Chemical mapping of a 207-nucleotide RNA with 2A3. 2A3 adducts were read by reverse transcription with SuperScript II with manganese. The data come from the RNA Mapping Database (RMDB), library OK3TST.
RNA sequence: GGGAACGACUCGAGUAGAGUCGAAAAGUCGGGUCGCGAGACCCGACAGUCGAGGAGACUCGACAAACGCACGAAACUUAGCAACUCGGAACCCACGACGUGCGCCGACUCACGGAACACCUGGUGACAGGAACCGUGAGACGGAGGUUGCAAGUAAGCAGUAAAUACCAUUCGUGGUAUUUACUGCAAAAGAAACAACAACAACAAC
Reactivity to 2A3 in 0.01 (KOAc 150mM, MgCl2 10mM, bicine 150mM(pH8.5), 24C), signal-to-noise 1, nucleotides 027 to 156: g010u000c000g010g000g000u000c000g010c040g000a020g000a030c010c000c000g000a000c000a000g000u000c000g010a010g000g010a070g000a070c010u000c000g010a000c020a020a090a030c010g020c000a000c000g110a210a180a030c110u150u160a090g000c000a000a000c000u000c000g030g040a120a130c000c000c000a010c000g020a000c030g000u000g000c010g000c010c000g010a040c000u000c010a000c010g100g000a220a030c070a110c100c000u000g000g060u180g130a110c000a040g030g010a020a020c000c000g000u020g010a000g000a010c000g000g010a000g000g010u000u000g000c000a000a000g100u100a130a000